[RMDB]
RNA sequence: GGGAACGACUCGAGUAGAGUCGAAAAAAACAAGUGGUGGUAGUCCGCAACUCUAAGGGGACGCCUUUAGAAGAAGAGGCUAGGUGGUAUUCCGGUGUGGGAUACUUGGUAAUAUGUAACGCUAAUUAUACGUAAGGCCGCUUCGGCGGCCUUACAAGAAUAUAACGUUGUUCGCAACGUUAUAUUCAAAAGAAACAACAACAACAAC
Reactivity to 2A3 in 0.01 (KOAc 150mM, MgCl2 10mM, bicine 150mM(pH8.5), 24C), signal-to-noise 2, nucleotides 027 to 156: a000a000a020c110a060a030g020u080g040g010u040g040g020u040a020g040u010c000c040g020c090a010a070c030u020c000u040a040a040g030g010g000g010a030c010g140c000c000u050u050u010a020g000a090a010g030a090a000g020a020g050g000c030u050a010g070g010u050g040g000u070a060u070u050c020c030g100g020u080g020u120g060g000g000a000u040a050c010u020u100g030g000u040a060a060u060a120u120g060u060a070a000c000g000c030u010a080a030u160u120a090u050a100c030g000u000a000a000g000g000c000c000g000c050u030u040c080g040g000c000g000g000c000c000u000u000a000c000a000a000
Reactivity to DMS in 0.01 (KOAc 150mM, MgCl2 10mM, bicine 150mM(pH8.5), 24C), signal-to-noise 1, nucleotides 027 to 156: a090a060a030c040a110a060g020u010g010g010u000g000g000u010a100g010u010c010c040g010c070a100a080c020u000c030u000a080a060g010g000g030g000a100c300g000c030c010u000u000u000a050g020a050a130g030a130a090g010a100g010g020c040u000a070g030g020u000g000g020u020a080u000u020c060c030g000g020u010g050u000g020g020g000a050u010a040c020u000u020g010g050u010a050a050u000a080u010g010u000a050a130c050g020c060u000a070a070u000u010a190u000a080c100g020u000a020a030g020g050c010c010g080c020u010u000c300g060g000c000g060g010c000c000u010u000a000c000a050a070
An RNA of 207 nucleotides, treated with 2A3 and DMS and read out base by base. As a SHAPE reagent, 2A3 marks flexible, mostly unpaired nucleotides at the ribose 2'-OH. High DMS reactivity at an A or C suggests that its Watson-Crick edge is free. Conditions: 150 mM KOAc, 10 mM MgCl2 and 150 mM bicine (pH 8.5), 24 C. For DMS the reverse transcriptase was MarathonRT. For DMS, 2,367 sequencing reads were counted.